[RMDB]
RNA sequence: GGGAACGACUCGAGUAGAGUCGAAAACAGGUCAACAAGGGAAUCCAGGACCUCAGGUAAGUCUAAGCCACUGCAGCUCCUUUGAAAUAAUGGGGGGAAGAUGCUAUCUUUCUAUAAGAAAAUCGACAGUCUCACAAUUUUCUAUGUAGUCCUAGCAGUCUCUUUCAGUGUUCGCACUGAAAGAGACAAAAGAAACAACAACAACAAC
Reactivity to 2A3 in 0.01 (KOAc 150mM, MgCl2 10mM, bicine 150mM(pH8.5), 24C), signal-to-noise 1, nucleotides 027 to 156: c010a010g050g000u070c050a020a070c070a180a180g020g000g040a050a160u000c000c000a040g010g070a040c110c020u080c090a020g060g060u170a100a040g030u070c020u090a090a000g000c000c010a050c060u070g080c070a010g030c000u100c010c000u090u060u030g110a100a100a030u120a070a120u220g000g000g000g000g030g030a050a000g060a030u080g050c010u090a030u080c030u030u120u030c050u020a080u030a120a060g000a030a070a000a000u050c040g030a080c020a090g060u070c020u050c060a040c030a080a060u000u090u030u030c010u000a030u060g100u020a100g080u040c000c120u050a050g000c080a030
An RNA of 207 nucleotides, treated with 2A3 and read out base by base.
The RNA was probed in 150 mM KOAc, 10 mM MgCl2 and 150 mM bicine (pH 8.5) at 24 C.
It was measured as part of the RMDB library OK3TST.